[RMDB]
RNA sequence: GGGAACGACUCGAGUAGAGUCGAAAAGGCGGUCGGUGACGACCGCCACAGAUGUCUACGGACAUCUGAAGCGCGAUCUACGGAUCGCGCAACGUGGUCGGUGACGACCACGAAGAUUAUCUACGGAUAAUCAAGCAUAGCGUACGCGCUAUGCAAGUCUAUCUUCGGAUAGACAACGGUCAGGCUUCGGCCUGACCGAGUUCUUCGUGAGAAGAACAGGCUAUAACUACGGUUAUAGCCAGCGUAUCUCUUAUGUCAACAGAGAUAAGUCGAUGUUCGCAUCGACUAAAAGAAACAACAACAACAAC
Reactivity to 2A3 in 0.01 (KOAc 150mM, MgCl2 10mM, bicine 150mM(pH8.5), 24C), signal-to-noise 4, nucleotides 027 to 266: g010g000c010g000g010u010c000g000g040u080g050a060c010g000a000c010c000g010c010c000a000c000a000g000a000u000g000u010c000u020a050c300g120g000a000c010a000u000c000u030g060a130a050g010c000g010c000g000a000u000c000u010a050c300g140g000a000u000c000g000c000g000c000a000a010c000g000u010g000g000u000c010g010g080u070g050a050c020g000a000c020c000a000c010g000a010a010g000a000u000u000a000u000c010u010a040c280g030g000a000u000a010a000u020c050a030a010g000c000a000u000a000g010c010g010u020a020c210g010c000g000c090u010a000u010g010c010a010a020g000u000c000u000a010u000c000u010u060c220g110g000a000u000a010g000a000c010a010a030c010g000g000u010c000a000g000g010c010u090u300c300g090g000c000c000u000g000a000c000c010g000a030g000u000u000c000u000u000c000g070u070g130a060g010a020a000g000a010a000c010a010g000g000c000u000a000u000a010a000c010u020a030c230g090g000u010u000a000u000a000g000c000c010a000g030c020g020u010a030u000c010u000c000u030u090a120u280g240u160c080a030a050c020a100g010a010g020a040u080a110
Reactivity to DMS in 0.01 (KOAc 150mM, MgCl2 10mM, bicine 150mM(pH8.5), 24C), signal-to-noise 1, nucleotides 027 to 266: g020g020c010g000g010u000c030g020g020u020g000a170c020g030a000c000c030g050c000c020a040c000a030g000a000u000g000u010c000u010a170c240g040g020a000c000a000u010c010u010g000a180a130g000c030g020c020g000a010u000c000u000a160c180g000g000a020u000c000g060c000g050c010a000a020c050g020u000g000g030u000c010g040g000u000g000a150c040g000a030c000c010a010c020g010a160a090g030a000u000u010a000u000c010u000a200c220g020g000a010u000a010a000u000c020a170a270g000c000a010u000a030g000c020g010u010a120c150g030c020g000c000u010a000u000g000c020a060a060g000u000c000u000a010u000c020u000u050c210g020g010a020u000a030g010a000c000a080a070c040g020g000u000c000a000g020g000c000u000u030c170g030g030c000c000u000g020a000c020c010g010a000g050u000u000c000u000u000c000g000u010g000a230g020a010a030g000a020a020c010a130g000g010c000u000a010u000a000a000c000u000a060c180g050g010u000u000a000u030a040g010c000c000a030g030c070g000u070a020u000c030u000c010u000u010a080u010g010u040c160a120a060c140a020g000a020g010a050u000a050
The data come from the RNA Mapping Database (RMDB), library POS240. This 307-nucleotide RNA was probed chemically with 2A3 and DMS. Conditions: 150 mM KOAc, 10 mM MgCl2 and 150 mM bicine (pH 8.5), 24 C. The DMS profile rests on 3,633 reads. The 2A3 profile rests on 5,282 reads. For 2A3 the reverse transcriptase was SuperScript II with manganese.